[RMDB]
RNA sequence: GGGAACGACUCGAGUAGAGUCGAAAAGGGGACUUCGGUCCCCAAAACAGCUGUAAUUAGUCAGUUUUCUGUCCUGUCCACACAGAAAACCGUCUAGUUACAGUUGUAAAAGGGUGCUUCGGCACCCCUUUUACUUAAACUUCGGUUUAAGUAAAAGAAAAGAAACAACAACAACAAC
Reactivity to DMS in 0.01 (KOAc 150mM, MgCl2 10mM, bicine 150mM(pH8.5), 24C), signal-to-noise 3, nucleotides 027 to 126: g000g020g000g020a010c010u010u010c180g040g000u000c000c000c000c010a010a000a080a030c000a000g020c000u000g010u000a010a010u000u000a000g010u000c000a010g020u010u000u000u000c000u000g000u000c090c090u020g000u000c070c120a130c230a030c000a010g010a010a000a000a010c000c030g010u000c000u000a010g010u000u000a010c000a000g010u000u010g000u010a030a060a090a110g010g000g010u000g010c000u000u000c160g020g000c000a010c010c000c010
Reactivity to 2A3 in 0.01 (KOAc 150mM, MgCl2 10mM, bicine 150mM(pH8.5), 24C), signal-to-noise 2, nucleotides 027 to 126: g000g000g000g000a000c010u010u070c190g080g010u020c020c000c000c000a000a010a000a000c000a000g000c000u000g000u000a010a010u000u000a010g010u010c010a010g000u000u010u010u000c000u010g030u020c050c020u070g150u110c070c040a050c010a000c000a050g000a000a000a000a010c000c000g000u010c010u000a000g000u000u000a000c000a000g000u000u000g000u000a010a010a000a000g040g000g000u000g010c020u030u090c180g130g000c010a000c000c000c000
Conditions: 150 mM KOAc, 10 mM MgCl2 and 150 mM bicine (pH 8.5), 24 C. Chemical mapping of a 177-nucleotide RNA with DMS and 2A3. Reactivities are given for positions 27 through 126. As a SHAPE reagent, 2A3 marks flexible, mostly unpaired nucleotides at the ribose 2'-OH. High DMS reactivity at an A or C suggests that its Watson-Crick edge is free. DMS adducts were read by reverse transcription with MarathonRT.